[RMDB]
RNA sequence: GGGAACGACUCGAGUAGAGUCGAAAAGAGGCAGGCCCGUGGUGGUAGGCGUACACCUGCUGGCUCAGAAGUCGGUGCUGAGGCGACGCAAGGGGCCAUCUUACUUCGGCCGUUUCCGGGGUAGGAAGCAUGAGGCGAUCUUCGGGUUGCCUCGUGCAAAAGAAACAACAACAACAAC
Reactivity to 2A3 in 0.01 (KOAc 150mM, MgCl2 10mM, bicine 150mM(pH8.5), 24C), signal-to-noise 9, nucleotides 027 to 126: g070a010g030g030c080a030g030g030c010c010c020g040u070g020g060u070g010g050u090a070g030g060c040g020u050a020c020a020c020c000u020g010c020u030g040g010c010u010c040a090g050a200a020g080u080c060g030g060u100g030c050u060g030a040g030g050c030g020a040c040g010c040a040a050g020g000g010g000c010c000a030u000c000u010u020a020c000u010u020c000g050g010c090c060g050u030u070u010c000c000g000g000g010g000u020a020g010g030a060a030
Reactivity to DMS in 0.01 (KOAc 150mM, MgCl2 10mM, bicine 150mM(pH8.5), 24C), signal-to-noise 9, nucleotides 027 to 126: g000a090g000g010c070a060g000g000c040c030c020g010u010g000g020u010g000g010u020a050g010g010c060g010u020a100c100a090c030c010u010g010c030u010g010g010c020u010c060a060g010a100a120g010u010c060g000g010u010g010c080u010g000a080g000g010c020g000a070c080g000c090a080a100g010g000g000g010c010c030a070u000c010u000u010a020c030u000u010c040g000g010c230c130g000u010u020u020c000c000g000g000g000g010u010a020g000g000a060a110
Description: The record gives the reactivity of an RNA of 177 nucleotides to 2A3 and DMS. For 2A3 the reverse transcriptase was SuperScript II with manganese. The reactions ran in a buffer of 150 mM KOAc, 10 mM MgCl2 and 150 mM bicine (pH 8.5), at 24 C.